[RMDB]
RNA sequence: GGGAACGACUCGAGUAGAGUCGAAAAAACAUUCAUUAUCCGUAUACUCUGAAAAUAACACCGAGUAACUUACGGGUUAUUCAUUAUUUUAGGAUUAAGCUCAAUAUAAAUUUUUGCGGAAUAGCACUAUGAAUAGAAGUUUCGACUUCUAUUCAUAAAAAGAAACAACAACAACAAC
Reactivity to 2A3 in 0.01 (KOAc 150mM, MgCl2 10mM, bicine 150mM(pH8.5), 24C), signal-to-noise 8, nucleotides 027 to 126: a000a000c070a060u120u100c030a020u050u150a040u050c010c010g030u040a020u020a090c030u010c010u040g100a090a050a040a050u060a050a030c070a060c100c090g010a010g030u020a020a050c020u030u060a030c150g060g000g000u010u010a010u010u040c020a010u010u110a040u030u050u030u090a020g020g010a020u080u080a070a020g020c010u010c080a090a020u110a040u120a200a180a230u130u150u050u100u090g030c020g030g010a090a080u040a080g010c010a020c080
Reactivity to DMS in 0.01 (KOAc 150mM, MgCl2 10mM, bicine 150mM(pH8.5), 24C), signal-to-noise 5, nucleotides 027 to 126: a080a060c110a090u030u030c100a070u000u010a070u010c020c000g010u010a060u000a070c150u000c010u000g000a070a050a020a020u000a030a040c170a110c270c170g000a030g010u000a020a020c030u000u010a090c150g030g010g010u000u010a010u020u000c010a090u020u000a030u000u010u010u020a210g010g000a030u010u010a050a120g010c080u010c060a050a050u020a140u020a070a030a150u010u020u010u000u010g020c010g000g000a060a050u020a100g010c110a070c190